The record gives the reactivity of an RNA of 207 nucleotides to 2A3 and DMS. For DMS, 10,782 sequencing reads were counted. The reactions ran in a buffer of 150 mM KOAc, 10 mM MgCl2 and 150 mM bicine (pH 8.5), at 24 C. For DMS the reverse transcriptase was MarathonRT. Values cover nucleotides 27 to 156.
[RMDB]
RNA sequence: GGGAACGACUCGAGUAGAGUCGAAAAAUGCGUCAAUUAAAAACAUACCAUAAAGAAGUAUUGGGGAUGCACAAAACGGAUCACCUUGUUUUGGAUUUUUCAGGCACGAUGUUUGAAAUGGGUAAUUUGUAUUUCGAUCCGAUGUUAGAGCAAGCGCCAAUAGUGCAUAGUUCGCUAUGCACUAUUGAAAAGAAACAACAACAACAAC
Reactivity to 2A3 in 0.01 (KOAc 150mM, MgCl2 10mM, bicine 150mM(pH8.5), 24C), signal-to-noise 7, nucleotides 027 to 156: a000u060g010c020g010u030c020a070a110u110u190a140a080a030a030a010c020a040u110a060c000c030a050u130a140a160a030g080a070a040g050u090a070u100u140g010g000g000g030a030u060g020c050a020c030a090a050a040a010c030g010g000a010u020c020a040c030c000u080u090g070u080u090u080u080g050g000a050u070u030u030u100u120c030a010g050g010c030a010c100g100a060u130g030u030u070u060g040a050a050a030u040g020g010g010u080a060a110u050u080u130g100u070a160u020u110u090c050g000a020u000c020c010g020a030u050g040u070u090a040g000a020g040c030a070a010g010c020g020c040
Reactivity to DMS in 0.01 (KOAc 150mM, MgCl2 10mM, bicine 150mM(pH8.5), 24C), signal-to-noise 4, nucleotides 027 to 156: a060u010g010c030g040u000c020a110a170u010u000a040a080a090a110a120c040a090u010a100c020c020a080u000a090a110a170g000a120a080g000u000a050u010u010g030g010g020g000a060u000g000c040a060c060a020a060a110a110c030g010g020a050u000c020a060c030c020u010u000g030u000u000u000u000g010g010a110u000u000u000u010u000c040a080g030g040c070a080c070g010a060u000g020u000u000u000g010a030a040a050u010g000g000g020u000a040a070u000u000u010g020u000a160u000u000u000c050g000a080u000c010c020g000a080u010g010u000u000a140g010a100g020c030a050a080g030c050g020c060

2A3 adducts were read by reverse transcription with SuperScript II with manganese.